[RMDB]
RNA sequence: GGGAACGACUCGAGUAGAGUCGAAAAGCAUGGGCAUUACCUCGCAGAGACAGAAGGUCAGGAACCUGAACAUCGCGGCGGUGCAAUGCCUGCCAGAAAGUUUCUAGCGCGGUAUCAAGACGGGUUACUACUAAAUAGGAUUCGUCCUAUUUAGUAGAAAAGAAACAACAACAACAAC
Reactivity to 2A3 in 0.01 (KOAc 150mM, MgCl2 10mM, bicine 150mM(pH8.5), 24C), signal-to-noise 9, nucleotides 027 to 126: g040c030a070u130g020g020g010c030a040u020u070a020c000c000u000c010g000c020a020g000a010g000a030c010a020g060a060a020g040g020u140c040a030g060g050a060a070c010c040u060g040a150a050c020a070u070c050g020c080g180g010c070g040g010u040g010c020a020a040u100g040c000c000u000g000c000c000a020g050a030a100a010g010u010u020u010c030u070a080g010c030g000c010g040g000u030a040u100c050a050a040g090a040c040g020g030g020u080u100a050
Reactivity to DMS in 0.01 (KOAc 150mM, MgCl2 10mM, bicine 150mM(pH8.5), 24C), signal-to-noise 9, nucleotides 027 to 126: g020c080a070u010g010g010g010c080a090u010u000a020c010c000u000c010g020c010a040g010a040g000a020c020a030g000a220a090g000g000u010c030a080g010g010a140a090c130c070u010g000a160a110c070a040u000c060g010c110g010g020c060g010g010u000g010c050a050a080u010g000c010c000u000g010c010c020a060g000a110a080a060g000u000u000u000c010u000a130g020c010g010c130g000g000u000a070u010c140a070a110g000a090c070g000g000g010u000u010a210
Notes:
Source: RMDB library OK2TST, as collected in RNAgym. An RNA of 177 nucleotides, treated with 2A3 and DMS and read out base by base. The RNA was probed in 150 mM KOAc, 10 mM MgCl2 and 150 mM bicine (pH 8.5) at 24 C. 2A3 adducts were read by reverse transcription with SuperScript II with manganese. DMS (dimethyl sulfate) methylates the pairing face of unpaired adenines and cytosines.